The record gives the reactivity of an RNA of 207 nucleotides to 2A3 and DMS.

RNA sequence: GGGAACGACUCGAGUAGAGUCGAAAAUUCCAGCCCUUGGACGUGUUACCUGUCUGGACAUCAGCCUCAGAAUAAUAAUAGCCCUGAGCUUCAGGUUAAGGAAAUCCUCUUAUGAGAUAGAGCUCAGCUCCUCCUGUAGAAGCUGAAAUUCCAGACAUAAAAUUUAAUGAUUCGUCAUUAAAUUUUAAAAAGAAACAACAACAACAAC
Reactivity to 2A3 in 0.01 (KOAc 150mM, MgCl2 10mM, bicine 150mM(pH8.5), 24C), signal-to-noise 1, nucleotides 027 to 156: u120u030c000c000a010g010c050c010c030u060u020g100g000a050c060g080u050g020u080u110a080c040c050u010g000u000c000u000g010g000a020c010a140u020c000a020g000c000c010u020c010a060g050a100a080u190a200a030u160a070a130u100a170g040c000c050c020u010g020a030g010c010u050u030c050a010g010g030u070u190a070a030g050g000a030a060a050u070c010c020u040c030u130u180a120u300g100a130g030a060u090a060g020a000g000c030u050c130a000g000c000u000c030c000u030c000c000u000g000u030a040g030a200a030g010c000u000g000a000a000a000u110u030c000c010a000g000a000c000a010
Reactivity to DMS in 0.01 (KOAc 150mM, MgCl2 10mM, bicine 150mM(pH8.5), 24C), signal-to-noise 2, nucleotides 027 to 156: u000u000c040c020a180g040c010c020c040u000u000g000g000a100c030g030u010g010u020u000a090c030c010u000g020u000c010u040g000g000a030c130a300u010c020a060g010c000c000u000c020a220g010a130a120u020a090a070u000a080a100u000a100g030c050c020c050u010g000a100g050c020u010u000c050a030g030g000u000u000a070a090g000g000a090a050a110u000c020c020u010c020u000u000a160u000g010a140g010a170u010a020g000a070g020c040u000c050a060g000c020u000c000c000u010c020c050u010g000u000a120g020a030a030g000c000u000g000a030a070a080u000u000c000c000a020g030a030c030a150
Values cover nucleotides 27 to 156. 2A3 adducts were read by reverse transcription with SuperScript II with manganese. It was measured as part of the RMDB library OK3TST. Conditions: 150 mM KOAc, 10 mM MgCl2 and 150 mM bicine (pH 8.5), 24 C. DMS adducts were read by reverse transcription with MarathonRT. For DMS, 3,212 sequencing reads were counted. DMS (dimethyl sulfate) methylates the pairing face of unpaired adenines and cytosines.